An RNA of 177 nucleotides, treated with 2A3 and DMS and read out base by base. For DMS, 1,637 sequencing reads were counted. The data come from the RNA Mapping Database (RMDB), library OK1LIB. Conditions: 150 mM KOAc, 10 mM MgCl2 and 150 mM bicine (pH 8.5), 24 C. 2A3 adducts were read by reverse transcription with SuperScript II with manganese. DMS adducts were read by reverse transcription with MarathonRT.
[RMDB]
RNA sequence: GGGAACGACUCGAGUAGAGUCGAAAACAGUAAAAGUGGCAACAGUGGUGAUUAACAGCCUGAUAGGGUGCUGCAGAGGCCCACUGUGUUGCUACUAAAGGUCUCUGCAGACGAUGAAAGACAUCGAAUGAUCCUGAUGGUUCGCCAUCAGGAUCAUAAAAGAAACAACAACAACAAC
Reactivity to 2A3 in 0.01 (KOAc 150mM, MgCl2 10mM, bicine 150mM(pH8.5), 24C), signal-to-noise 1, nucleotides 027 to 126: c040a010g070u180a000a060a010a020g000u000g000g000c000a080a020c090a080g030u050g040g060u040g030a200u130u070a120a000c010a000g020c000c000u020g000a120u200a260g120g030g050u080g050c010u000g030c000a000g000a000g000g000c000c020c020a000c060u000g000u000g070u170u150g000c010u030a000c000u000a000a000a030g000g000u000c000u030c000u010g000c000a020g020a000c040g000a000u000g080a100a020a060g020a000c010a010u000c020g000a000
Reactivity to DMS in 0.01 (KOAc 150mM, MgCl2 10mM, bicine 150mM(pH8.5), 24C), signal-to-noise 1, nucleotides 027 to 126: c110a120g030u000a060a060a110a070g050u000g000g030c080a000a000c020a000g000u000g000g010u000g000a140u040u000a150a080c170a110g010c000c000u000g010a110u110a070g000g010g070u010g010c010u000g020c000a000g020a010g050g020c020c000c060a100c300u000g000u000g060u000u030g000c020u020a020c030u030a000a090a030g000g040u000c020u000c020u000g000c030a020g030a290c030g000a050u010g020a040a060a050g000a290c000a000u000c000g010a180